[RMDB]
RNA sequence: GGGAACGACUCGAGUAGAGUCGAAAAGCAAGAGCGUUCGCGCUCUUGCAAAGAAAAUGCGUCCAAAGGGUGAGGAUGGGAAGGACGCAAAACCCACACCCUAAACACUCUGCUUCGGCAGAGUGAACUACCGGAAUAUCUUCGGAUAUUCCGGUAGAAAAGAAACAACAACAACAAC
Reactivity to 2A3 in 0.01 (KOAc 150mM, MgCl2 10mM, bicine 150mM(pH8.5), 24C), signal-to-noise 2, nucleotides 027 to 126: g000c000a000a000g020a000g000c030g020u080u120c180g030c000g060c090u010c010u000u010g000c000a000a000a000g010a010a090a010a040u070g000c010g010u020c020c010a230a130a050g050g000g010u070g030a050g100g050a130u130g100g030g040a090a070g060g000a000c010g010c000a010a010a070a070c020c000c000a020c000a000c010c010c000u020a060a070a000c010a000c000u010c000u000g000c020u040u070c080g110g000c000a000g000a000g000u000g000a010a010
Reactivity to DMS in 0.01 (KOAc 150mM, MgCl2 10mM, bicine 150mM(pH8.5), 24C), signal-to-noise 2, nucleotides 027 to 126: g010c010a000a000g010a020g030c000g040u000u000c210g000c000g000c000u010c000u010u010g030c000a010a080a100g000a070a050a050a090u000g060c030g020u000c000c020a090a090a070g000g000g010u000g010a080g000g000a080u020g000g000g010a140a250g000g000a020c020g000c030a040a020a060a070c000c010c000a090c080a080c020c030c010u010a080a040a230c000a010c000u000c000u000g000c000u000u020c170g030g000c000a000g000a020g000u000g000a000a120
Background:
Source: RMDB library M2PK50, as collected in RNAgym. The record gives the reactivity of an RNA of 177 nucleotides to 2A3 and DMS. High DMS reactivity at an A or C suggests that its Watson-Crick edge is free. Reactivities are given for positions 27 through 126. As a SHAPE reagent, 2A3 marks flexible, mostly unpaired nucleotides at the ribose 2'-OH. For DMS the reverse transcriptase was MarathonRT. The reactions ran in a buffer of 150 mM KOAc, 10 mM MgCl2 and 150 mM bicine (pH 8.5), at 24 C. 2A3 adducts were read by reverse transcription with SuperScript II with manganese. The 2A3 profile rests on 3,204 reads.